Structure probing data (2A3) for a 207-nucleotide construct. The RNA was probed in 150 mM KOAc, 10 mM MgCl2 and 150 mM bicine (pH 8.5) at 24 C.

RNA sequence: GGGAACGACUCGAGUAGAGUCGAAAAGGGUGACACCUAGGAACCGUAGGGGUAUUCUCAAAGGAAGCUUUUGCAGUGACGCCCAUGUAAGUGGGAUAUAACAACAGAACUCGUAUGAGUAGCCUAAUAAAUCGGACCUUCUUCGGAAGGUCCGAAACGAUCUGUCCUAGUUCGCUAGGACAGAUCGAAAAGAAACAACAACAACAAC
Reactivity to 2A3 in 0.01 (KOAc 150mM, MgCl2 10mM, bicine 150mM(pH8.5), 24C), signal-to-noise 1, nucleotides 027 to 156: g050g000g000u060g020a030c000a030c070c030u060a040g000g080a080a050c050c010g030u130a020g000g030g010g020u030a110u120u020c020u000c020a090a070a010g050g030a070a010g010c000u010u030u100u060g000c070a010g020u000g010a010c040g020c000c040c000a020u100g080u110a080a100g020u000g060g000g000a010u040a000u020a090a020c060a040a010c000a010g040a030a000c020u010c100g060u160a120u150g020a010g030u010a000g020c020c030u020a080a090u090a120a190a010u000c000g000g000a000c000c000u000u000c010u020u030c070g030g000a010a000g000g000u000c000c030g000a000a000a000

Source: RMDB library M2RFPK, as collected in RNAgym.